Notes
The data come from the RNA Mapping Database (RMDB), library OK3TST. Structure probing data (DMS and 2A3) for a 207-nucleotide construct. As a SHAPE reagent, 2A3 marks flexible, mostly unpaired nucleotides at the ribose 2'-OH. Reactivities are rounded to 0.1 and cut off at 0 and 3.
[RMDB]
RNA sequence: GGGAACGACUCGAGUAGAGUCGAAAAGCGGCGGCUCAUUUCUGGAUCUACGACACGCUGAAGAUCCUCUCGAUACUCGUCGUCGUGAUUUUCGGUGUGACGUAUCUUCGAACGUAUUUUCCACCGGAGAAGAUCAGAGACUAUCUCGAGGGGAAGCAAGAGUUGGGAUAUUCGUAUCCCAACUCUUAAAAGAAACAACAACAACAAC
Reactivity to DMS in 0.01 (KOAc 150mM, MgCl2 10mM, bicine 150mM(pH8.5), 24C), signal-to-noise 2, nucleotides 027 to 156: g010c060g020g010c050g000g020c090u010c040a190u030u000u000c040u000g020g010a140u000c020u000a060c070g010a140c090a060c020g050c010u010g020a060a060g000a070u010c000c010u010c010u000c010g000a090u000a050c110u000c210g000u000c050g030u000c040g020u000g030a080u000u000u020u000c000g030g030u010g020u000g040a140c210g000u000a030u010c020u020u000c130g000a210a140c140g010u000a080u000u000u020u000c110c030a040c020c010g040g000a100g030a070a040g000a130u000c020a090g020a280g020a090c020u000a090u000c090u000c020g000a060g040g030g040g030a070a120g070c170
Reactivity to 2A3 in 0.01 (KOAc 150mM, MgCl2 10mM, bicine 150mM(pH8.5), 24C), signal-to-noise 3, nucleotides 027 to 156: g040c030g040g010c010g030g000c010u030c080a070u000u180u050c070u110g080g000a050u000c030u120a030c030g090a030c040a020c120g020c040u040g030a030a000g030a040u000c010c000u000c010u000c010g010a010u040a170c100u070c120g020u000c010g080u010c030g040u060g030a030u020u010u000u010c000g000g000u020g060u100g030a020c030g020u040a090u050c060u150u110c210g060a070a040c020g020u080a150u140u110u110u060c050c040a000c000c020g020g010a040g030a050a010g070a030u000c030a010g020a010g010a060c020u010a050u090c010u000c020g010a000g000g000g000g030a020a010g070c040